An RNA of 177 nucleotides, treated with 2A3 and read out base by base. It was measured as part of the RMDB library RFM100. 2A3 adducts were read by reverse transcription with SuperScript II with manganese. Conditions: 150 mM KOAc, 10 mM MgCl2 and 150 mM bicine (pH 8.5), 24 C.
RNA sequence: GGGAACGACUCGAGUAGAGUCGAAAACCGUGUUCUGUGGCAUUGUUUGAGCUUUGAAAAAAGCGAGAAGUUGCAGCCUUUAAAAAUUACCUAGCGGUUUUCUUUGACUUUUUGGGGUCAAUCUUUGGAAUGGUUUGGAAUUCGUUCCAAACCAUUCAAAAGAAACAACAACAACAAC
Reactivity to 2A3 in 0.01 (KOAc 150mM, MgCl2 10mM, bicine 150mM(pH8.5), 24C), signal-to-noise 2, nucleotides 027 to 126: c000c000g010u020g050u100u110c110u060g050u080g000g020c070a080u150u090g100u090u060u080g040a030g020c020u000u000u020g120a140a040a000a000a000a000g000c030g010a010g000a020a020g030u070u080g000c040a010g000c020c000u140u240u130a150a300a100a090a030u120u180a090c040c060u040a010g010c030g050g000u080u010u060u050c020u180u140u150g020a020c000u040u000u050u080u070g060g010g020g000u000c000a020a070u000c010u000u000u060g080